An RNA of 207 nucleotides, treated with 2A3 and read out base by base. Reactivities are given for positions 27 through 156. The reactions ran in a buffer of 150 mM KOAc, 10 mM MgCl2 and 150 mM bicine (pH 8.5), at 24 C.

RNA sequence: GGGAACGACUCGAGUAGAGUCGAAAACGACCGCACCGGAGCGCUAGAAAAGGUCCUCGGACUUUCUUCUACUCCGAAGCCGGUUUGAGGCCCGGCGAAACGCGGGCCUGUCUCCUAAGAUGCCUCCGCUAGUCGAGCGGACUUGGCCUCUUCCGCCGUUAGGUGUGAACUUCGGUUCACACCUAACAAAAGAAACAACAACAACAAC
Reactivity to 2A3 in 0.01 (KOAc 150mM, MgCl2 10mM, bicine 150mM(pH8.5), 24C), signal-to-noise 2, nucleotides 027 to 156: c040g030a000c000c000g020c030a050c120c000g050g010a030g040c110g060c230u110a000g000a000a000a000a010g010g000u000c010c010u100c230g110g000a010c000u010u020u020c030u000u000c000u030a020c000u030c010c010g000a000a000g130c160c000g050g000u000u050u140g030a000g010g040c020c020c000g140g120c130g110a260a220a020c230g000c010g050g000g020c000c000u000g020u000c070u000c000c000u010a010a000g000a000u000g000c000c000u010c000c010g010c030u060a090g190u300c120g150a000g000c000g000g000a000c020u160u190g000g000c000c050u030c010u030u010c090c080g140c060c060